[RMDB]
RNA sequence: GGGAACGACUCGAGUAGAGUCGAAAAAGGGGAACGGGCCUAGCAAAAACAGCGGGGAAAGAAGACCCUGUUGAGCUUGACUCUAGUCUGAUAUUGCAUAGUGACCUAAAAGGUGUAGAAUAGGUGGUUCAUUCACCAGGUUCGCCUGGUGAAUGAAAAAAGAAACAACAACAACAAC
Reactivity to 2A3 in 0.01 (KOAc 150mM, MgCl2 10mM, bicine 150mM(pH8.5), 24C), signal-to-noise 3, nucleotides 027 to 126: a000g040g000g000g000a040a000c020g000g000g030c000c010u010a000g010c050a050a070a040a110a140c030a020g010c020g020g000g030g080a070a220a060g270a010a070g060a080c000c000c000u010g010u010u030g000a010g000c040u130u050g020a080c000u000c050u050a060g070u000c050u050g010a060u080a060u140u110g020c000a030u070a070g060u060g050a050c010c010u050a110a110a040a020g110g000u060g060u080a030g070a100a080u070a070g000g050u030g070g000
Reactivity to DMS in 0.01 (KOAc 150mM, MgCl2 10mM, bicine 150mM(pH8.5), 24C), signal-to-noise 3, nucleotides 027 to 126: a090g010g010g000g000a090a110c110g020g000g020c040c040u000a020g000c020a020a070a080a140a090c060a020g000c070g000g000g000g000a090a070a090g020a160a100g000a080c020c020c030u010g000u030u000g020a170g010c040u000u020g000a090c030u010c040u000a080g010u010c020u000g010a070u020a070u030u000g000c020a060u020a040g000u000g000a050c020c010u010a050a040a120a080g000g000u010g010u010a050g000a050a070u020a040g010g010u010g010g030
About this RNA
The record gives the reactivity of an RNA of 177 nucleotides to 2A3 and DMS. Reactivities are given for positions 27 through 126. It was measured as part of the RMDB libraries RFM100 and RFMREP. The reactions ran in a buffer of 150 mM KOAc, 10 mM MgCl2 and 150 mM bicine (pH 8.5), at 24 C. The 2A3 profile rests on 1,519 reads.